[RMDB]
RNA sequence: GGGAACGACUCGAGUAGAGUCGAAAAGCGCGAUUCGGAGUUGAAGUCGAUAUUGGCCAGCACACCUUCGAUCGAAGGAUUGGCGUCCUCAAUCGCGGCGCAUGCUUUGUUGAGGUGGUCGCCAAUAGAUGAGCAGUGAGUUCGCUCACUGCUCAUCAAAAGAAACAACAACAACAAC
Reactivity to 2A3 in 0.01 (KOAc 150mM, MgCl2 10mM, bicine 150mM(pH8.5), 24C), signal-to-noise 1, nucleotides 027 to 126: g050c020g000c020g050a050u120u060c010g010g040a060g030u010u110g080a070a030g020u020c000g020a000u010a030u190u150g040g040c040c050a060g030c010a030c000a000c100c010u090u040c050g090a180u080c070g000a020a010g060g010a010u000u060g050g000c010g000u000c000c030u030c010a050a020u150c040g040c020g010g000c000g000c040a110u230g060c020u090u070u090g000u020u010g000a020g000g000u060g050g000u050c020g000c000c010a000a000u000a010
Reactivity to DMS in 0.01 (KOAc 150mM, MgCl2 10mM, bicine 150mM(pH8.5), 24C), signal-to-noise 3, nucleotides 027 to 126: g010c090g000c030g010a020u000u000c060g020g010a070g000u000u000g010a100a070g010u010c060g010a110u000a070u010u010g010g000c030c030a070g010c110a120c130a090c020c010u000u000c010g010a100u010c080g010a060a030g000g000a100u000u000g010g020c020g010u000c000c020u000c060a020a040u010c230g020c150g010g000c020g000c190a070u000g010c050u000u010u000g040u000u000g000a040g000g010u010g020g010u000c050g010c000c000a010a020u010a070